[RMDB]
RNA sequence: GGGAACGACUCGAGUAGAGUCGAAAACUGACGGAAAGCGAAACUGCCCCUUUGAAAUACGAUCGGCAAUCUUCUCCUGCAUGUGCUUCCUAAUCUGCGCCGGAUUGCCGGGAGUGAGACGUACACAAAUUUUAUGAUCAUUCGUGAUCAUAAAAUUAAAAGAAACAACAACAACAAC
Reactivity to DMS in 0.01 (KOAc 150mM, MgCl2 10mM, bicine 150mM(pH8.5), 24C), signal-to-noise 9, nucleotides 027 to 126: c060u010g010a090c070g010g000a050a060a060g010c050g010a050a070a080c060u010g000c020c000c020c050u000u030u020g000a060a070a100u030a050c060g010a230u030c030g010g010c020a030a030u000c010u010u020c050u010c040c040u010g010c050a050u010g000u010g010c060u010u000c020c020u000a070a090u020c070u010g000c040g010c050c080g010g010a040u000u000g010c000c010g000g000g000a250g010u000g010a070g010a090c090g010u020a080c120a070c160a050
Reactivity to 2A3 in 0.01 (KOAc 150mM, MgCl2 10mM, bicine 150mM(pH8.5), 24C), signal-to-noise 9, nucleotides 027 to 126: c020u040g060a030c030g030g060a130a050a020g060c040g030a080a060a040c040u070g030c000c000c010c000u050u100u170g130a090a080a030u210a040c040g020a050u050c010g000g000c010a010a030u000c010u090u020c040u040c020c030u040g020c020a050u110g030u040g060c020u060u050c010c010u040a060a080u040c040u080g010c020g020c030c020g030g010a030u010u040g010c010c000g000g010g000a020g000u020g000a020g010a010c060g070u130a040c060a000c020a040